An RNA of 177 nucleotides, treated with 2A3 and DMS and read out base by base. For 2A3, 1,951 sequencing reads were counted. 2A3 adducts were read by reverse transcription with SuperScript II with manganese. Reactivities are given for positions 27 through 126.
RNA sequence: GGGAACGACUCGAGUAGAGUCGAAAACAGAGAGAGGGGUUCACUUGCCCAGGGUCACACAGCUCAGGAAUCUGAACCUGGCUCAAACCAGCAUUCACUUCUCUCAAGGCCCACCCAAGGGCUGCAGUGUUAGAUCUCAGUUCGCUGAGAUCUAACAAAAAGAAACAACAACAACAAC
Reactivity to 2A3 in 0.01 (KOAc 150mM, MgCl2 10mM, bicine 150mM(pH8.5), 24C), signal-to-noise 2, nucleotides 027 to 126: c040a020g070a010g000a000g000a010g100g060g010g020u070u070c060a050c100u060u030g020c010c050c030a040g030g000g030u150c030a020c000a010c010a100g000c020u090c160a030g050g020a130a160u090c160u100g020a100a110c010c000u000g020g000c010u020c040a080a060a040c000c030a030g000c000a000u040u050c050a030c050u050u050c020u000c000u000c000a000a050g010g000c000c010c010a010c010c020c010a080a070g000g000g000c010u030g000c100a020g080
Reactivity to DMS in 0.01 (KOAc 150mM, MgCl2 10mM, bicine 150mM(pH8.5), 24C), signal-to-noise 2, nucleotides 027 to 126: c190a140g020a090g000a040g000a030g000g000g030g090u020u000c180a060c110u000u000g000c040c050c100a080g010g030g010u040c110a140c140a110c240a090g000c040u000c020a040g020g000a050a120u020c110u040g000a100a050c080c030u000g000g010c050u000c070a030a070a070c060c020a080g010c050a090u000u000c090a070c010u000u000c000u000c010u000c030a160a120g010g010c000c020c030a080c010c040c070a210a100g000g000g000c000u000g010c270a070g000
For DMS the reverse transcriptase was MarathonRT. The reactions ran in a buffer of 150 mM KOAc, 10 mM MgCl2 and 150 mM bicine (pH 8.5), at 24 C. High DMS reactivity at an A or C suggests that its Watson-Crick edge is free.